An RNA of 207 nucleotides, treated with 2A3 and read out base by base. Reactivities are given for positions 27 through 156. The 2A3 profile rests on 972 reads. The RNA was probed in 150 mM KOAc, 10 mM MgCl2 and 150 mM bicine (pH 8.5) at 24 C. 2A3 adducts were read by reverse transcription with SuperScript II with manganese.

[RMDB]
RNA sequence: GGGAACGACUCGAGUAGAGUCGAAAACUCAAUCACUACGGUGAUUGAGAAUGCUUACGCCUCAAUGAAGCUUGAGUUGAGUGCCUCAAGCAGAUAUAGACUGAAACAUUUAGUAUGGUCAAGCAGGGAGCAACAGCUCGAGUACGCUCGAGCUGAAGGACCCUAUCACUUUCGAGUGAUAGGGUCCAAAAGAAACAACAACAACAAC
Reactivity to 2A3 in 0.01 (KOAc 150mM, MgCl2 10mM, bicine 150mM(pH8.5), 24C), signal-to-noise 2, nucleotides 027 to 156: c020u000c000a000a000u000c000a000c020u090a020c150g100g000u000g000a000u000u000g000a000g010a000a020u100g000c010u000u020a020c060g020c020c000u110c070a060a060u070g070a110a080g000c030u050u020g030a010g030u030u050g100a030g090u040g060c010c000u000c000a000a000g020c000a030g060a030u140a000u030a030g080a030c010u050g110a090a100a000c060a030u080u140u060a070g040u100a100u210g000g030u040c020a000a000g040c060a030g020g030g070a080g000c000a010a070c000a020g000c000u000c000g000a000g010u010a050c280g000c060u000c000g000a000g000c000u000g020a000a000